The data come from the RNA Mapping Database (RMDB), library OK1LIB. An RNA of 177 nucleotides, treated with DMS and 2A3 and read out base by base. As a SHAPE reagent, 2A3 marks flexible, mostly unpaired nucleotides at the ribose 2'-OH. The RNA was probed in 150 mM KOAc, 10 mM MgCl2 and 150 mM bicine (pH 8.5) at 24 C. DMS (dimethyl sulfate) methylates the pairing face of unpaired adenines and cytosines. The DMS profile rests on 9,825 reads.
RNA sequence: GGGAACGACUCGAGUAGAGUCGAAAAGCCAUAAUGUUUUGUGUGAGAAGCAACAUGGUGAUGUGUUUAAUUUGCAGCAGAACACAAGUUACACGUCGUUUGUGACGUAUCCUUCCAGGGGACCAUCCCUUCCCAUUCAAUUCGUUGAAUGGGAAGGAAAAGAAACAACAACAACAAC
Reactivity to DMS in 0.01 (KOAc 150mM, MgCl2 10mM, bicine 150mM(pH8.5), 24C), signal-to-noise 4, nucleotides 027 to 126: g000c040c000a050u030a100a180u010g010u000u000u000u000g010u030g000u020g010a090g010a040a040g000c030a020a060c150a040u010g000g000u020g000a140u010g020u000g000u000u000u000a040a050u020u000u010g010c090a110g030c080a100g000a060a060c040a060c050a030a090g000u000u000a080c110a030c010g000u010c040g000u040u000u010g020u000g010a030c020g000u010a050u000c050c030u010u010c040c090a060g000g000g000g000a060c090c050a090u030c110
Reactivity to 2A3 in 0.01 (KOAc 150mM, MgCl2 10mM, bicine 150mM(pH8.5), 24C), signal-to-noise 9, nucleotides 027 to 126: g040c000c010a060u090a110a150u080g090u020u060u060u030g160u020g040u050g090a150g010a080a020g030c020a010a030c010a070u050g020g020u110g050a110u070g070u000g020u020u040u070a140a220u070u130u160g090c110a100g000c010a010g040a110a010c030a000c010a050a030g030u060u110a090c090a010c040g020u020c030g030u090u180u190g150u160g030a000c010g010u030a060u030c000c000u050u060c040c020a010g020g010g000g040a010c000c010a050u090c020